[RMDB]
RNA sequence: GGGAACGACUCGAGUAGAGUCGAAAAUUCGAAGCUUCCUUUGGCUACUACCCGGUGGAAACAACUGAAGCUUCAGCGCCUUUUUUUCCUAUCUUCUUUAGCACCGGGCUAGGGAGUAAGCCCGUGGAACCUUAGUUUUGUUCCCUCGGGACUUACUGCAAUACGUAGGGUUCGCCCUACGUAUUGCAAAAGAAACAACAACAACAAC
Reactivity to 2A3 in 0.01 (KOAc 150mM, MgCl2 10mM, bicine 150mM(pH8.5), 24C), signal-to-noise 1, nucleotides 027 to 156: u100u070c070g000a000a000g000c000u000u000c040c000u010u020u040g140g020c160u260a060c030u020a050c050c000c060g010g060u030g000g050a190a210a000c040a010a000c020u010g000a000a020g010c000u000u000c000a050g020c010g220c020c060u180u030u090u100u040u060u140c060c000u140a250u300c050u220u000c040u140u280u060a000g020c010a050c000c000g000g000g000c000u000a020g020g020g000a020g000u010a010a000g000c000c000c070g000u000g060g010a050a010c010c000u120u080a100g060u190u240u210u150g000u010u010c000c010c010u080c000g000g000g110a140c000u010u000a000c010u000
This 207-nucleotide RNA was probed chemically with 2A3. For 2A3, 428 sequencing reads were counted. The reactions ran in a buffer of 150 mM KOAc, 10 mM MgCl2 and 150 mM bicine (pH 8.5), at 24 C. As a SHAPE reagent, 2A3 marks flexible, mostly unpaired nucleotides at the ribose 2'-OH. 2A3 adducts were read by reverse transcription with SuperScript II with manganese.